[RMDB]
RNA sequence: GGGAACGACUCGAGUAGAGUCGAAAAUAAUUCAACAUAAUAAUACGAUUGCGUACACACAAGUUGAUGAUAAUGCAUCGAAAGAUGGCGUUAUCGUUGAAGGUUUAGCAGACGCUCUUAUGAACCAUCGUAUCCUUGAGUUCGCUCAAGGAUACGAAAAAGAAACAACAACAACAAC
Reactivity to 2A3 in 0.01 (KOAc 150mM, MgCl2 10mM, bicine 150mM(pH8.5), 24C), signal-to-noise 4, nucleotides 027 to 126: u250a020a110u100u100c050a010a070c050a030u160a140a020u080a140a040u120a150c020g030a030u060u110g040c050g030u140a080c050a020c030a000c030a170a100g090u040u060g070a000u000g000a000u010a060a010u040g030c000a000u000c020g040a030a060a060g010a000u040g080g070c020g000u020u010a000u000c000g000u000u010g020a070a040g040g040u050u050u140a020g000c030a000g020a050c010g020c080u020c000u030u130a110u160g080a040a010c010c000a010
Reactivity to DMS in 0.01 (KOAc 150mM, MgCl2 10mM, bicine 150mM(pH8.5), 24C), signal-to-noise 2, nucleotides 027 to 126: u060a020a100u020u050c070a060a060c080a050u000a090a040u000a060a090u010a130c090g030a120u020u000g010c040g000u000a040c170a030c100a050c150a160a100g000u000u010g020a020u000g010a010u000a000a000u000g000c000a010u000c000g020a130a020a120g000a010u000g020g030c000g020u000u010a010u000c000g010u000u020g000a030a040g000g030u000u000u000a050g010c120a020g010a050c010g000c060u030c090u010u000a040u000g000a050a160c030c000a070